[RMDB]
RNA sequence: GGGAACGACUCGAGUAGAGUCGAAAAACUUGUAUAGGCGAUUAAUAAAUCUUCUGUAAAUGCUGCAAGAGGAUUACCCCUUGAGGUUUCAGCACUAGGCUGCUCUAGCGAUUAAUCAAUGCAUUUGUAACGGAAAGACAGUUCGCUGUCUUUCCAACUAACGAAUAAGGUUCGCCUUAUUCGUUAGAAAAGAAACAACAACAACAAC
Reactivity to 2A3 in 0.01 (KOAc 150mM, MgCl2 10mM, bicine 150mM(pH8.5), 24C), signal-to-noise 3, nucleotides 027 to 156: a010c070u100u040g080u070a180u100a140g080g030c030g070a050u050u110a170a090u170a170a150a040u030c030u090u000c000u040g040u040a080a160a090u150g090c100u020g000c040a090a010g010a010g030g020a000u020u050a040c010c020c000c020u010u030g070a050g110g020u020u160u190c010a000g020c010a020c110u060a050g190g010c010u020g000c000u000c010u040a010g010c020g040a080u020u140a030a030u070c080a010a100u110g050c010a020u070u040u050g100u060a080a010c030g000g000a000a000a000g000a000c010a000g010u030u070c200g040c100u000g000u000c000u000u000u000c000c000a000a010
Reactivity to DMS in 0.01 (KOAc 150mM, MgCl2 10mM, bicine 150mM(pH8.5), 24C), signal-to-noise 1, nucleotides 027 to 156: a030c030u000u010g020u000a100u010a090g040g040c050g000a070u000u000a050a080u010a050a140a060u000c020u000u000c020u020g000u000a080a100a080u000g020c020u000g000c010a050a080g030a030g000g010a220u010u000a160c000c010c010c010u010u000g020a070g000g000u000u000u000c040a080g030c020a060c010u000a080g000g000c040u000g000c080u010c060u000a040g060c070g000a130u000u000a070a080u000c060a040a140u000g010c020a120u010u000u020g010u010a070a130c070g020g010a030a010a010g000a030c000a030g040u000u000c290g020c020u000g000u010c030u000u000u010c000c010a000a060